RNA sequence: GGGAACGACUCGAGUAGAGUCGAAAAGUGUACUUACACAAACCUAGAUGAUAUGACCUACGACAUACCUGGGCUAUAUGGUAUUGCUCCUAGGCUACAAACGUAUGCUAUACAGCAUAAUACUCUCCUGAAUACUGUAAGCAAUUGUAACACACUAGCGUAAUAGUCCUUUCGAGGACUAUUACGCAAAAGAAACAACAACAACAAC
Reactivity to 2A3 in 0.01 (KOAc 150mM, MgCl2 10mM, bicine 150mM(pH8.5), 24C), signal-to-noise 2, nucleotides 027 to 156: g010u010g000u030a180c150u190u130a000c030a000c030a060a040a060c030c030u050a100g000a060u100g030a030u050a110u260g120a190c030c030u080a030c030g030a000c040a000u040a020c000c000u110g040g150g000c140u130a000u060a020u300g040g020u010a000u000u140g010c030u020c010c020u030a010g020g000c000u060a060c050a030a180a000c070g090u040a030u070g000c000u030a030u070a300c050a000g050c010a040u040a180a000u130a170c060u040c000u050c130c000u040g020a000a040u060a130c030u060g000u060a080a000g040c000a000a060u160u010g080u170a130a010c030a000c000a000c000u000a040